[RMDB]
RNA sequence: GGGAACGACUCGAGUAGAGUCGAAAAGAAAGAAAGAAUUCGGGAGCUAAAGGUGGCACUUUAGCAAGAAUAGGAUGAACUUUGUUUCAUGUGGCCGAUUAGGUUGUGAUGCCCGCACAAACUAUAAAGGAUAGUACUGGUUCGCCAGUACUAUCCUAAAAGAAACAACAACAACAAC
Reactivity to DMS in 0.01 (KOAc 150mM, MgCl2 10mM, bicine 150mM(pH8.5), 24C), signal-to-noise 1, nucleotides 027 to 126: g000a030a080a080g000a090a030a040g000a090a090u050u020c030g000g000g010a180g000c000u000a000a030a040g000g020u020g000g000c100a100c000u000u000u000a010g000c050a110a100g020a030a090u030a080g010g000a030u000g000a060a070c040u050u000u020g000u000u000u050c000a120u020g040u020g000g000c000c010g000a110u020u000a020g000g010u000u000g000u000g000a050u040g000c000c000c090g000c060a010c060a070a000a060c080u010a030u060a060a030
Reactivity to 2A3 in 0.01 (KOAc 150mM, MgCl2 10mM, bicine 150mM(pH8.5), 24C), signal-to-noise 1, nucleotides 027 to 126: g140a000a000a000g120a000a040a000g130a020a030u230u140c010g000g160g000a050g000c000u040a000a000a000g070g040u050g040g000c050a020c040u000u000u000a000g000c040a010a010g020a150a080u200a040g240g090a010u010g000a000a000c020u200u050u040g050u100u130u050c030a030u070g000u070g190g050c000c010g040a040u040u050a130g100g060u000u000g000u020g010a050u030g000c000c000c000g040c000a030c000a000a100a060c090u080a000u000a180a070